[RMDB]
RNA sequence: GGGAACGACUCGAGUAGAGUCGAAAAGUAUGGAGCUAGCGAUUUUGUAGUCGGUGCACGAGCUGUAGUACCGACAUACGACAUGUUUUUUUUCAUGCGUACAGCUCGUACGCUAGCGAACAUACGAGGGUUGCAGUACCUUCGGGUGCUGCAACCCAAAAGAAACAACAACAACAAC
Reactivity to 2A3 in 0.01 (KOAc 150mM, MgCl2 10mM, bicine 150mM(pH8.5), 24C), signal-to-noise 2, nucleotides 027 to 126: g000u000a000u020g040g000a020g030c040u000a000g000c000g160a220u020u000u000u300g020u060a090g000u000c010g000g060u130g030c030a010c060g000a010g000c020u040g010u060a030g030u030a020c010c010g000a000c000a000u240a000c040g140a130c000a000u010g050u050u060u000u000u000u000u170u050c000a000u000g010c020g040u000a000c000a000g000c000u000c000g020u010a010c010g000c000u000a000g000c000g030a050a000c000a000u000a000c000g000a070